[RMDB]
RNA sequence: GGGAACGACUCGAGUAGAGUCGAAAAACCUUUGUGGUGGUGAGGCACCGGGAGCGUUGGACGUUCCCAUUGGGAACGUACAACGCGUUGAUCGGUGCUACCCACCACCACCACUCUGGUAAACUUUUAAACGUUUGUUCGCAAACGUUUAAAAGAACAUCACAAUGAGAUUCGUCUCAUUGUGAUGAAAAGAAACAACAACAACAAC
Reactivity to DMS in 0.01 (KOAc 150mM, MgCl2 10mM, bicine 150mM(pH8.5), 24C), signal-to-noise 1, nucleotides 027 to 156: a030c030c010u010u000u000g020u010g030g020u000g010g020u000g010a140g010g020c010a020c000c000g010g000g000a090g020c000g000u000u000g010g010a000c000g010u000u010c000c000c020a090u010u010g070g060g020a040a010c030g050u000a020c010a010a000c000g030c010g010u000u000g000a050u000c010g000g000u000g020c020u000a000c030c000c030a300c100c000a010c010c000a000c000c050a020c040u000c030u010g010g000u000a050a110a160c010u000u000u000u000a010a000a030c000g010u000u000u000g030u000u010c290g050c000a030a010a000c020g000u010u000u000a000a010a020a010g020a090a270
Reactivity to 2A3 in 0.01 (KOAc 150mM, MgCl2 10mM, bicine 150mM(pH8.5), 24C), signal-to-noise 3, nucleotides 027 to 156: a000c010c010u020u010u050g000u000g010g010u000g000g000u000g010a010g010g010c010a000c000c020g010g000g000a050g000c000g000u010u010g000g000a000c010g000u010u010c030c010c050a180u140u300g000g000g000a000a010c000g000u030a020c020a000a020c000g000c020g000u060u030g010a020u020c010g000g000u010g000c010u020a000c000c000c000a010c000c000a000c000c000a000c000c000a010c010u060c030u020g030g040u110a140a090a120c000u020u000u000u010a000a010a000c010g000u000u000u010g050u040u070c190g000c190a010a000a000c000g000u000u000u010a010a000a000a000g000a000a020
Notes:
Structure probing data (DMS and 2A3) for a 207-nucleotide construct. The reactions ran in a buffer of 150 mM KOAc, 10 mM MgCl2 and 150 mM bicine (pH 8.5), at 24 C. The 2A3 profile rests on 6,902 reads.